This 170-nucleotide RNA was probed chemically with DMS and 2A3. For 2A3, 46,529 sequencing reads were counted. DMS adducts were read by reverse transcription with MarathonRT. The reactions ran in a buffer of 150 mM KOAc, 10 mM MgCl2 and 150 mM bicine (pH 8.5), at 24 C. The DMS profile rests on 72,263 reads.
RNA sequence: GGGAACGACUCGAGUAGAGUCGAAAAGAAAUCGACCGGGUCCCGCAGAACCCGAUGGAGUCCCCCACCAUCCCUUCCGGAUGAAACUGGUCCCGAUAGGGGCACCCACAAUAGGAUGGCAAAAGGGUAGCAUACUCGUUCGCGAGUAUGAAAAGAAACAACAACAACAAC
Reactivity to DMS in 0.01 (KOAc 150mM, MgCl2 10mM, bicine 150mM(pH8.5), 24C), signal-to-noise 9, nucleotides 027 to 129: g000a060a060a060u010c050g020a070c080c000g000g000g010u000c010c050c070g010c110a120g020a100a050c040c010c030g010a070u030g000g020a090g000u010c050c000c000c020c030a130c070c030a060u020c020c000c070u020u060c060c090g050g000a130u020g000a030a060a050c100u020g000g000u000c000c030c000g010a090u060a130g010g000g010g020c010a000c050c000c030a100c130a080a060u020a090g000g000a040u010g000g000c100a000a040a050a050g000g010g040u040a060g000
Reactivity to 2A3 in 0.01 (KOAc 150mM, MgCl2 10mM, bicine 150mM(pH8.5), 24C), signal-to-noise 9, nucleotides 027 to 129: g060a010a090a030u090c040g030a020c020c000g010g000g030u040c060c030c020g010c030a020g020a050a030c000c010c010g020a030u070g020g010a050g090u080c020c010c000c000c010a020c010c010a030u030c010c000c000u130u090c030c020g030g020a070u090g040a070a040a030c060u100g030g000u040c000c010c000g050a060u180a210g000g000g000g000c000a020c000c000c000a030c010a020a030u030a100g020g010a010u020g010g000c020a020a040a040a040g040g000g030u030a020g000